[RMDB]
RNA sequence: GGGAACGACUCGAGUAGAGUCGAAAAGAUAUGGACGAAGUCCGAUAAGUCCCACUCGGAAACGAGUGAGGACUUUUGACGGACUAAGUCCUAAGUCAAAACGCGAAUAUCUUCGGAUAUUCGCGAACAUUAGGGAGUAGUUCGCUACUCCCUAAUGAAAAGAAACAACAACAACAAC
Reactivity to 2A3 in 0.01 (KOAc 150mM, MgCl2 10mM, bicine 150mM(pH8.5), 24C), signal-to-noise 5, nucleotides 027 to 126: g010a010u040a010u060g000g000a000c000g020a090a010g000u010c010c020g020a110u150a240a010g000u000c000c000c000a010c000u000c010g030g000a050a030a020c010g010a010g020u020g010a170g010g010a010c000u030u020u070u130g070a010c010g010g000a000c000u010a000a010g000u000c000c000u000a050a000g010u010c020a000a020a090a130c010g000c000g000a010a000u060a000u000c020u050u130c300g120g000a000u000a000u020u010c000g000c000g010a010a000
Reactivity to DMS in 0.01 (KOAc 150mM, MgCl2 10mM, bicine 150mM(pH8.5), 24C), signal-to-noise 8, nucleotides 027 to 126: g000a030u000a230u010g000g000a020c000g010a300a080g000u000c000c000g010a120u010a030a020g000u000c000c010c000a010c000u000c000g010g000a070a050a080c000g000a020g000u000g000a090g010g000a000c010u000u000u000u010g020a200c060g000g000a010c000u000a030a300g000u000c000c000u000a010a070g010u000c010a090a040a090a200c020g010c000g000a010a000u000a000u000c000u000u010c190g020g010a010u000a000u000u000c000g010c000g010a020a060